This 177-nucleotide RNA was probed chemically with DMS and 2A3. The RNA was probed in 150 mM KOAc, 10 mM MgCl2 and 150 mM bicine (pH 8.5) at 24 C. 2A3 adducts were read by reverse transcription with SuperScript II with manganese. For DMS, 1,585 sequencing reads were counted.
RNA sequence: GGGAACGACUCGAGUAGAGUCGAAAAGAUAUGGAUCCAUAUGACAUGCUCUUAUCGGAAACGAUUUGAGCAACAGCAUACGGAUCCUAAGUCAAAACUUCUUUUAGUGUUCGCACUAAAAGAAGAAGAAGGUGUGUAAGUUCGCUUACACACCUUCAAAAGAAACAACAACAACAAC
Reactivity to DMS in 0.01 (KOAc 150mM, MgCl2 10mM, bicine 150mM(pH8.5), 24C), signal-to-noise 2, nucleotides 027 to 126: g020a020u000a080u020g000g000a010u000c000c000a030u010a000u010g010a090c020a150u000g010c000u010c000u000u010a010u010c000g020g000a030a010a060c000g000a000u000u000u000g000a030g010c020a010a070c300a180g020c020a040u000a010c070g010g020a000u000c000c000u010a000a040g000u010c020a150a050a070a160c000u000u000c000u000u000u000u000a020g020u000g010u000u010c180g010c000a010c000u000a020a000a000a000g000a000a010g000a110a040
Reactivity to 2A3 in 0.01 (KOAc 150mM, MgCl2 10mM, bicine 150mM(pH8.5), 24C), signal-to-noise 2, nucleotides 027 to 126: g000a010u000a020u040g000g000a000u010c010c080a000u000a000u030g240a290c160a300u060g010c010u000c000u000u010a010u000c000g010g000a050a010a010c000g020a020u040u000u030g000a000g020c010a010a020c040a000g050c000a010u010a010c020g000g000a000u010c000c010u010a000a000g000u000c020a010a020a210a240c010u010u000c000u000u010u010u000a010g000u010g050u090u060c300g050c110a010c000u030a000a000a000a000g020a000a000g000a010a030